[RMDB]
RNA sequence: GGGAACGACUCGAGUAGAGUCGAAAACGCUGAUCUGCUAGUCAAAACGGUGUCGACGUUGCGCAGCUCAGGGGCUGCGUUGGGUAGAUUGACCACGAUGCGCAAGGCGGUACUGGCAGUCGGAUCGAUACGUCAAGAAGUUCGCUUCUUGACGUAUAAAAGAAACAACAACAACAAC
Reactivity to DMS in 0.01 (KOAc 150mM, MgCl2 10mM, bicine 150mM(pH8.5), 24C), signal-to-noise 7, nucleotides 027 to 126: c090g010c030u000g000a030u010c020u000g000c010u000a040g020u000c100a100a080a090a120c120g010g020u000g010u000c010g010a070c060g010u010u000g010c020g010c000a010g010c020u000c110a120g010g030g000g010c010u000g010c010g020u000u000g000g000g010u000a070g020a110u000u010g010a060c020c010a120c100g010a110u000g000c030g010c120a090a090g010g000c050g010g000u000a030c010u000g000g010c020a030g000u000c020g000g010a070u000c120g000
Reactivity to 2A3 in 0.01 (KOAc 150mM, MgCl2 10mM, bicine 150mM(pH8.5), 24C), signal-to-noise 6, nucleotides 027 to 126: c040g000c070u070g010a060u120c000u030g000c010u020a030g020u050c050a040a040a080a090c070g040g000u030g010u040c010g020a090c130g200u090u070g000c010g000c000a010g000c000u030c060a180g220g010g070g000c010u010g000c000g020u040u040g080g020g010u060a080g010a260u030u150g070a020c010c000a010c040g070a050u140g000c050g000c090a050a050g270g000c030g000g020u060a010c010u000g020g010c010a020g010u030c020g020g000a020u090c020g030